The record gives the reactivity of an RNA of 177 nucleotides to DMS. Reactivities are given for positions 27 through 126. Values are in units of 0.01, from 0 to 300, in steps of 10.
RNA sequence: GGGAACGACUCGAGUAGAGUCGAAAAGAUAUGGAUUGAGGGAGCGGGAGAGUCGGAAACGACUCUUCGCAUCGAUCUCACGGUCCUAAGUCAAAGGCAUUAAUAGUGUUCGCACUAUUAAUGCCAAUCUAGCGGACAAGUUCGCUUGUCCGCUAGAAAAAGAAACAACAACAACAAC
Reactivity to DMS in 0.01 (KOAc 150mM, MgCl2 10mM, bicine 150mM(pH8.5), 24C), signal-to-noise 1, nucleotides 027 to 126: g000a030u000a300u000g000g010a030u000u010g000a000g000g000g000a070g010c080g010g030g050a010g000a010g030u030c020g010g000a070a050a180c000g030a000c000u000c000u010u010c000g010c110a090u000c110g000a120u000c000u000c000a130c200g000g030u000c000c010u000a030a130g010u000c080a060a150a220g010g010c000a000u000u000a000a010u010a000g020u000g000u000u000c230g030c000a000c000u000a030u000u000a000a000u000g000c000c000a000a000

Overview
The RNA was probed in 150 mM KOAc, 10 mM MgCl2 and 150 mM bicine (pH 8.5) at 24 C.